[RMDB]
RNA sequence: GGGAACGACUCGAGUAGAGUCGAAAAUCAAAUACUCAAACUUCACUUCAGAAGAGAAGACGCACGCAGCGAGCGAGAGAGAGACUCACUCACCCAACCCAGGGAAGGGACCACCAGGAGGUAAAAAGAAUGUUUAGAUGUUCGCAUCUAAACAUUCAAAAGAAACAACAACAACAAC
Reactivity to 2A3 in 0.01 (KOAc 150mM, MgCl2 10mM, bicine 150mM(pH8.5), 24C), signal-to-noise 2, nucleotides 027 to 126: u060c010a070a000a040u110a050c030u050c060a110a090a060c040u050u020c030a030c050u190u080c070a090g030a190a010g040a100g020a040a030g060a040c020g020c020a030c060g020c020a030g040c020g040a020g020c020g000a010g000a000g000a010g000a010g020a050c010u020c060a040c010u020c020a080c020c010c000a020a050c010c020c010a010g000g020g040a030a070g010g010g000a040c020c000a020c020c000a040g040g030a020g000g050u140a040a070a000a010a030
Reactivity to DMS in 0.01 (KOAc 150mM, MgCl2 10mM, bicine 150mM(pH8.5), 24C), signal-to-noise 3, nucleotides 027 to 126: u010c070a080a100a090u010a130c060u010c070a120a050a120c060u000u000c050a120c060u010u010c080a130g010a060a040g010a100g000a080a050g000a110c090g010c030a030c040g010c070a080g000c090g020a010g020c010g010a060g000a030g000a110g000a120g010a070c050u000c010a060c030u010c050a140c050c010c050a060a090c060c050c010a100g000g010g010a040a050g010g000g000a050c070c040a020c060c040a040g000g010a070g030g000u000a030a050a040a050a040
Background:
An RNA of 177 nucleotides, treated with 2A3 and DMS and read out base by base. 2A3 adducts were read by reverse transcription with SuperScript II with manganese. The RNA was probed in 150 mM KOAc, 10 mM MgCl2 and 150 mM bicine (pH 8.5) at 24 C. The data come from the RNA Mapping Database (RMDB), library M2PK90.